[RMDB]
RNA sequence: GGGAACGACUCGAGUAGAGUCGAAAAGCGUGGCAGUUCGCUGCCACGCAAAUAAAAACGAGGAGCGGUAGGCCUCGAAAAAUGCCGCAAGAUCAAAGAUCAAAAGGCCAACGUUCGCGUUGGCCAACAAUCUUUUCAAGUUCGCUUGAAAAGAUUGAAAAGAAACAACAACAACAAC
Reactivity to 2A3 in 0.01 (KOAc 150mM, MgCl2 10mM, bicine 150mM(pH8.5), 24C), signal-to-noise 2, nucleotides 027 to 126: g010c000g000u000g000g020c000a000g000u030u100c160g060c110u010g010c010c010a010c000g010c000a000a000a000u000a000a010a000a000a010c050g010a000g010g010a050g030c010g030g030u020a010g090g140c010c000u000c000g060a200a080a000a010a000u020g020c000c010g000c020a040a030g010a030u060c120a260a110a070g040a010u040c020a000a100a090a050g000g020c030c000a010a000c010g020u060u060c170g000c000g060u000u010g000g000c000c000a000a000
Reactivity to DMS in 0.01 (KOAc 150mM, MgCl2 10mM, bicine 150mM(pH8.5), 24C), signal-to-noise 3, nucleotides 027 to 126: g010c020g020u010g000g010c020a000g030u000u000c180g010c000u010g010c000c000a000c000g040c020a010a010a040u020a070a070a120a110a170c140g010a020g020g000a140g000c010g010g020u000a040g050g030c010c000u020c010g000a020a040a010a030a100u000g000c020c010g010c040a150a120g010a040u000c070a120a100a220g010a030u000c050a070a030a110a080g020g010c010c000a000a010c000g020u000u000c250g010c010g030u000u000g010g010c000c000a010a050
This 177-nucleotide RNA was probed chemically with 2A3 and DMS. Reactivities are given for positions 27 through 126. For 2A3, 3,114 sequencing reads were counted. The data come from the RNA Mapping Database (RMDB), library M2PK50.